[RMDB]
RNA sequence: GGGAACGACUCGAGUAGAGUCGAAAAAGAUCAGUAGAGACGAAGUGAAAGAGCCAGCACCAGCAGAAGAAGAGCAAGCCAAUCACGUGCCAGCAGCCGAAGUGAUACGAAGGGUCCGAGCGUAUCAAAUAUAAUUUAUAUUCGUAUAAAUUAUAUUAAAAGAAACAACAACAACAAC
Reactivity to DMS in 0.01 (KOAc 150mM, MgCl2 10mM, bicine 150mM(pH8.5), 24C), signal-to-noise 2, nucleotides 027 to 126: a060g000a090u020c040a090g010u040a110g010a110g010a070c090g020a100a150g010u010g030a070a120a080g000a090g010c090c050a040g010c050a050c030c040a060g000c050a020g010a120a110g000a070a080g000a060g000c030a050a040g010c040c040a030a110u030c090a040c110g020u010g000c020c010a070g010c050a060g070c030c050g010a090a090g010u000g010a040u000a020c010g000a040a060g000g020g020u010c030c030g030a100g000c040g010u010a030u010c020a040
Reactivity to 2A3 in 0.01 (KOAc 150mM, MgCl2 10mM, bicine 150mM(pH8.5), 24C), signal-to-noise 2, nucleotides 027 to 126: a000g060a140u050c000a010g140u170a030g000a000g040a080c020g030a150a020g070u060g090a080a080a000g040a000g050c010c000a000g040c020a020c000c010a010g090c030a020g020a120a000g080a030a000g000a080g000c020a060a000g000c020c000a030a030u080c010a030c070g020u010g050c020c010a030g030c020a000g060c020c000g040a050a030g040u020g030a010u010a030c000g010a050a030g030g000g020u040c010c000g030a030g030c010g010u020a020u070c000a000
An RNA of 177 nucleotides, treated with DMS and 2A3 and read out base by base. High 2A3 reactivity points to a flexible backbone, as in loops and unpaired stretches. The RNA was probed in 150 mM KOAc, 10 mM MgCl2 and 150 mM bicine (pH 8.5) at 24 C. Source: RMDB library OK1LIB, as collected in RNAgym.